[RMDB]
RNA sequence: GGGAACGACUCGAGUAGAGUCGAAAACUUGCAUGCAAUUCGAUGUAUACCUUAGUGACCCGCACUACACUGAGAAAGUAGCAAUUUACUAUGCGAAGCUAGUAAAUUAGCGGAUUUCGAGGUGGAGCGUCAUACGUUAAUUCGUUAACGUAUGACGAAAAGAAACAACAACAACAAC
Reactivity to DMS in 0.01 (KOAc 150mM, MgCl2 10mM, bicine 150mM(pH8.5), 24C), signal-to-noise 9, nucleotides 027 to 126: c060u000u000g010c090a030u000g010c040a070a130u020u020c130g000a100u000g010u010a080u010a050c060c170u010u010a050g010u010g000a110c010c000c010g020c170a200c030u010a050c000a010c000u000g000a300g000a010a010a010g000u030a280g010c010a030a010u000u000u000a000c000u000a020u020g030c020g010a100a140g010c050u000a000g010u000a000a000a000u000u000a090g030c000g000g020a300u000u000u000c000g000a300g000g000u000g000g000a050g010
Reactivity to 2A3 in 0.01 (KOAc 150mM, MgCl2 10mM, bicine 150mM(pH8.5), 24C), signal-to-noise 9, nucleotides 027 to 126: c010u020u090g010c020a040u050g030c020a030a270u130u120c060g070a030u030g040u050a050u040a100c020c070u050u060a020g010u020g070a080c010c000c010g040c010a020c020u080a020c010a000c010u020g010a010g000a030a010a010g040u100a010g010c000a000a000u000u010u000a000c010u010a030u250g030c060g080a100a050g020c010u000a000g000u000a000a010a020u010u020a060g000c010g150g300a060u000u010u010c000g000a000g000g000u000g000g010a010g030